Annotation
The record gives the reactivity of an RNA of 177 nucleotides to DMS and 2A3. For DMS, 1,867 sequencing reads were counted. Conditions: 150 mM KOAc, 10 mM MgCl2 and 150 mM bicine (pH 8.5), 24 C. 2A3 is a SHAPE reagent: it acylates the 2'-hydroxyl of flexible nucleotides of all four kinds. Reactivities are rounded to 0.1 and cut off at 0 and 3.
RNA sequence: GGGAACGACUCGAGUAGAGUCGAAAAGAUAUGGACUCCGAACUACGAGUGAAGAAGCGAAGAACUGGAAUUAGGUCGGAAACGACCUAAUUCCAGGGAGCUUUGGAGGCUCGCGGAGUCCUAAGUCCCUAUAGUAGUGCUUCGGCACUACUAUAGGAAAAGAAACAACAACAACAAC
Reactivity to DMS in 0.01 (KOAc 150mM, MgCl2 10mM, bicine 150mM(pH8.5), 24C), signal-to-noise 3, nucleotides 027 to 126: g020a130u000a300u000g000g000a010c000u000c000c000g000a090a060c200u010a300c030g000a020g010u000g010a300a250g010a020a020g020c000g030a110a160g010a140a300c010u020g000g000a050a000u000u000a010g000g000u020c000g000g000a110a130a150c000g010a010c000c000u010a000a000u000u000c000c000a000g000g020g010a100g020c010u000u010u010g000g010a210g000g040c000u000c030g000c000g010g010a010g000u000c000c000u000a010a100g020u000c030
Reactivity to 2A3 in 0.01 (KOAc 150mM, MgCl2 10mM, bicine 150mM(pH8.5), 24C), signal-to-noise 1, nucleotides 027 to 126: g030a020u140a080u150g010g050a000c030u000c040c030g020a110a060c100u210a070c300g000a000g060u280g040a110a080g060a010a000g050c020g200a300a020g050a200a110c000u000g000g000a000a000u000u000a000g000g000u020c050g050g000a220a080a010c000g000a030c030c010u000a000a000u000u040c000c000a000g000g000g000a000g000c010u000u010u040g050g060a120g300g070c000u010c010g020c000g000g000a000g000u020c000c000u000a020a000g020u040c000